[RMDB]
RNA sequence: GGGAACGACUCGAGUAGAGUCGAAAACUCACAUCUAACCUGGCUCAUAAAUCUCUCUGGUGAUAUGCCAUCUUUCAUGAAAUGUUCCUCCAUAUCUGGCCAUGACUUGACUAUCCUAUGAGUGUUAACCAUGGGCUAUAUUCGUAUAGCCCAUGGUAAAAGAAACAACAACAACAAC
Reactivity to 2A3 in 0.01 (KOAc 150mM, MgCl2 10mM, bicine 150mM(pH8.5), 24C), signal-to-noise 3, nucleotides 027 to 126: c000u010c010a060c020a100u100c070u070a050a070c010c020u020g060g020c020u020c050a070u130a240a180a100u010c050u000c000u020c040u050g090g000u060g060a060u050a060u210g050c010c010a060u060c020u010u110u100c060a110u080g110a120a140a060u140g020u040u020c000c010u010c030c010a030u060a020u060c000u040g000g010c030c000a070u080g020a050c040u040u040g030a040c040u000a060u130c020c030u110a110u130g090a040g070u070g060u050u110a020
Reactivity to DMS in 0.01 (KOAc 150mM, MgCl2 10mM, bicine 150mM(pH8.5), 24C), signal-to-noise 3, nucleotides 027 to 126: c020u010c030a160c190a100u000c060u000a110a140c070c050u000g010g020c030u010c050a070u000a060a110a110u000c040u000c030u010c070u000g030g020u000g020a080u010a060u000g010c050c040a040u000c040u000u000u000c080a070u020g000a090a060a080u010g000u000u000c010c020u000c030c020a040u000a030u000c030u000g020g010c050c040a050u010g010a070c060u000u000g010a060c060u010a050u010c020c010u000a090u020g010a110g010u000g010u010u010a110